Chemical mapping of a 177-nucleotide RNA with DMS and 2A3. Values cover nucleotides 27 to 126.

[RMDB]
RNA sequence: GGGAACGACUCGAGUAGAGUCGAAAAUGUACGAUGACACAAGCUCGGCGAUAAACACUAUGCUCGACAUAGCAGAGAAGUACCGGACUGCACCUAGGUCAUUCGAAUCUUCGAUUAUAGAGAUGAAGUAUAUCUGGUCUUUCGAGACCAGAUAUACAAAAGAAACAACAACAACAAC
Reactivity to DMS in 0.01 (KOAc 150mM, MgCl2 10mM, bicine 150mM(pH8.5), 24C), signal-to-noise 4, nucleotides 027 to 126: u000g020u000a120c100g010a070u000g010a030c040a050c090a140a070g000c020u000c040g010g020c080g010a090u000a130a100a130c160a050c030u000a020u000g010c050u010c140g010a090c100a060u000a030g000c060a090g000a110g010a090a110g010u010a060c070c030g020g000a040c010u000g000c130a110c170c080u000a050g020g000u010c020a040u000u000c040g010a120a090u000c030u010u010c060g020a130u000u000a070u000a080g000a080g010a060u000g010a050a100
Reactivity to 2A3 in 0.01 (KOAc 150mM, MgCl2 10mM, bicine 150mM(pH8.5), 24C), signal-to-noise 3, nucleotides 027 to 126: u170g060u050a020c030g010a060u070g040a000c010a020c020a140a000g020c000u020c020g020g000c010g050a050u100a090a120a010c020a000c050u040a040u050g000c010u090c160g150a090c060a040u110a010g030c080a000g050a010g030a200a020g010u040a060c000c000g000g030a010c010u060g010c030a070c040c050u040a040g060g000u000c020a020u060u090c040g050a050a040u010c020u080u090c040g060a120u190u070a170u270a140g060a010g020a060u080g030a140a020

It was measured as part of the RMDB library OK2TRN. High DMS reactivity at an A or C suggests that its Watson-Crick edge is free.